[RMDB]
RNA sequence: GGGAACGACUCGAGUAGAGUCGAAAACAAGUGGCACCAGGCGGCUACCGCGCUCAAUGAGAUCCUGGUUGACUUGGGUAACGUGAUACGAGCCGGCGCGGAGGAGGUGGCCAACACCGACCGUCGAGCCGUCGUCAUUAUUCGUAAUGACGACGGCAAAAGAAACAACAACAACAAC
Reactivity to DMS in 0.01 (KOAc 150mM, MgCl2 10mM, bicine 150mM(pH8.5), 24C), signal-to-noise 4, nucleotides 027 to 126: c070a080a080g010u000g030g020c090a050c030c030a040g020g010c170g000g000c060u010a090c030c030g040c080g000c010u000c080a120a110u020g000a120g010a130u000c030c050u000g000g010u000u010g000a130c070u010u010g000g010g000u010a040a100c090g010u010g010a070u010a080c070g000a150g000c020c040g000g000c010g020c010g010g010a090g010g000a260g010g000u000g010g000c050c160a050a130c050a040c020c020g000a140c040c010g010u000c070g000a100
Reactivity to 2A3 in 0.01 (KOAc 150mM, MgCl2 10mM, bicine 150mM(pH8.5), 24C), signal-to-noise 3, nucleotides 027 to 126: c010a000a080g060u060g090g060c080a010c050c050a030g020g040c000g040g000c030u110a100c020c000g000c000g000c010u040c030a080a230u160g020a050g000a080u040c030c050u100g080g000u040u100g070a080c020u000u050g050g080g000u070a160a030c050g080u130g100a040u060a190c090g020a040g020c040c000g030g000c020g030c030g010g000a030g000g040a050g010g040u010g010g030c050c040a020a010c010a000c010c020g070a130c010c020g070u070c030g020a020